[RMDB]
RNA sequence: GGGAACGACUCGAGUAGAGUCGAAAAUGUUGCUAAAGCACCAGCAAUUAGACCCACUGUGGCUUUUGCACCAUCAGUGUAAAUGUCAAUACAAUGAAAAGGCAAAUAAUAUCUUUGUAUUAUAUAAAAAUAGUUCUGUCUUCACAGAAAGUGAACAACGUUUUAGCAUAUUCGUAUGCUAAAACGUAAAAGAAACAACAACAACAAC
Reactivity to 2A3 in 0.01 (KOAc 150mM, MgCl2 10mM, bicine 150mM(pH8.5), 24C), signal-to-noise 2, nucleotides 027 to 156: u050g000u000u000g000c000u110a130a130a140g000c010a120c170c090a020g030c010a020a020u100u080a050g090a090c020c020c000a020c060u050g050u130g070g030c030u020u000u040u020g000c000a000c020c010a100u300c120a060g020u020g020u060a050a140a090u080g010u020c050a020a000u070a080c010a000a030u080g120a020a080a020a170g050g000c000a060a080a060u130a090a130u120a300u250c040u070u190u040g010u010a160u090u070a100u140a050u160a210a000a020a020a070u070a170g010u000u040c000u000g050u020c020u030u070c120a020c000a000g140a080a100a030g060u100g050a090a000c090a080

An RNA of 207 nucleotides, treated with 2A3 and read out base by base. The RNA was probed in 150 mM KOAc, 10 mM MgCl2 and 150 mM bicine (pH 8.5) at 24 C.